[RMDB]
RNA sequence: GGGAACGACUCGAGUAGAGUCGAAAACUGAAUCCAUCUUUGCUUUUCUUUUACAGAACGCAAUAUUCAUUAUAACAUGUCUUCUUUUAAUGAAUCAGUCGGUCUUGGCUACUAGAAGACACAUGCAAUUGAAUUUGUCUAGUAUCCUUAUGUAUCAAGGAUAAUAUGGGUUCGCCCAUAUUAUCCUAAAAGAAACAACAACAACAAC
Reactivity to 2A3 in 0.01 (KOAc 150mM, MgCl2 10mM, bicine 150mM(pH8.5), 24C), signal-to-noise 6, nucleotides 027 to 156: c040u060g060a040a070u050c040c020a070u060c130u080u080u060g050c040u080u140u070u030c020u020u130u040u080a100c080a080g050a090a010c020g000c020a020a050u040a020u220u010c010a000u010u100a070u040a140a090c020a060u060g050u030c020u060u020c010u070u150u030u070a110a060u120g070a040a050u070c030a040g110u080c050g090g120u040c080u130u140g020g000c000u000a010c010u000a020g010a020a000g040a010c020a000c000a050u070g060c010a010a170u070u050g030a050a080u040u070u060g050u030c020u030a040g000u040a080u070c010c020u100u150a110u170g090u020a090u110c060a050
Reactivity to DMS in 0.01 (KOAc 150mM, MgCl2 10mM, bicine 150mM(pH8.5), 24C), signal-to-noise 1, nucleotides 027 to 156: c100u000g020a130a120u000c010c010a120u000c060u000u000u010g010c010u000u000u000u000c010u000u000u000u000a150c060a090g010a040a030c110g010c030a120a140u000a080u000u000c010a040u010u000a060u000a080a070c060a090u000g020u000c080u000u010c060u000u000u000u000a010a070u010g010a050a030u000c080a190g020u010c050g010g030u010c000u000u000g040g000c110u010a040c020u010a150g020a020a020g000a030c070a040c020a110u010g000c110a060a090u020u000g020a060a090u020u000u010g010u000c060u000a140g030u000a030u000c050c030u000u010a060u000g010u010a060u010c100a120
Record summary: An RNA of 207 nucleotides, treated with 2A3 and DMS and read out base by base. The 2A3 profile rests on 2,933 reads. The RNA was probed in 150 mM KOAc, 10 mM MgCl2 and 150 mM bicine (pH 8.5) at 24 C. It was measured as part of the RMDB library OK3TST. 2A3 adducts were read by reverse transcription with SuperScript II with manganese.